[RMDB]
RNA sequence: GGGAACGACUCGAGUAGAGUCGAAAACACCAGUGCUGAUGCUGCUCGGCCUUUGGCUGGGUUCGGUUUUGGCCAAGGGCGCUAGCAAUCAGUCGGCCACUACCAACUCACACGCCUGGCAGCGAUAGUAAUGCCACGUAUUCGUACGUGGCAUUACAAAAGAAACAACAACAACAAC
Reactivity to 2A3 in 0.01 (KOAc 150mM, MgCl2 10mM, bicine 150mM(pH8.5), 24C), signal-to-noise 2, nucleotides 027 to 126: c050a040c000c040a060g080u120g180c060u110g050a160u210g020c020u000g010c000u010c040g000g000c010c010u180u250u250g130g000c150u000g050g000g000u050u080c080g010g000u010u010u030u030g010g020c040c010a070a050g110g030g020c050g000c080u060a060g000c000a050a140u170c020a040g060u030c060g010g010c020c010a000c010u000a010c000c000a010a000c000u020c010a010c000a010c060g000c020c000u010g020g000c000a000g000c010g010a010u010a020
Reactivity to DMS in 0.01 (KOAc 150mM, MgCl2 10mM, bicine 150mM(pH8.5), 24C), signal-to-noise 3, nucleotides 027 to 126: c200a260c010c040a090g020u010g020c080u000g000a070u000g000c020u000g010c020u000c300g010g010c000c100u000u010u010g020g020c170u010g010g010g000u000u000c170g010g010u000u000u000u010g000g000c000c010a150a170g030g000g000c080g000c140u000a090g010c070a100a060u000c100a130g000u010c110g010g000c010c030a010c020u000a040c020c000a030a020c010u000c010a040c030a140c220g010c010c010u000g000g010c010a040g000c000g000a040u010a070
The record gives the reactivity of an RNA of 177 nucleotides to 2A3 and DMS. For DMS, 2,790 sequencing reads were counted. 2A3 adducts were read by reverse transcription with SuperScript II with manganese. It was measured as part of the RMDB library OK2TRN. Values are in units of 0.01, from 0 to 300, in steps of 10.